This 177-nucleotide RNA was probed chemically with 2A3. The RNA was probed in 150 mM KOAc, 10 mM MgCl2 and 150 mM bicine (pH 8.5) at 24 C. Reactivities are given for positions 27 through 126. Source: RMDB library OK2TST, as collected in RNAgym.

[RMDB]
RNA sequence: GGGAACGACUCGAGUAGAGUCGAAAAUUGUAGGUUUGGUUGGGUGUUUUUCUCACCACAGCACUCGUCUGAACACUCACCACACUUACGAGUGCAUUCACAUACAUAGCUAUCUUUGCUAUCAUCACACCUCACGGUACUUCGGUACCGUGAGGUGAAAAGAAACAACAACAACAAC
Reactivity to 2A3 in 0.01 (KOAc 150mM, MgCl2 10mM, bicine 150mM(pH8.5), 24C), signal-to-noise 1, nucleotides 027 to 126: u080u020g040u060a020g000g000u010u030u030g030g030u080u160g020g050g000u000g060u000u000u000u030u000c130u070c080a120c100c050a090c010a010g000c030a000c050u050c010g150u000c050u030g040a080a010c030a030c010u000c010a080c000c000a040c000a000c000u010u000a000c010g000a040g040u110g090c030a100u110u110c170a080c040a090u190a050c010a030u010a030g000c000u030a050u180c110u130u170u030g050c040u000a010u060c040a010u110c010a050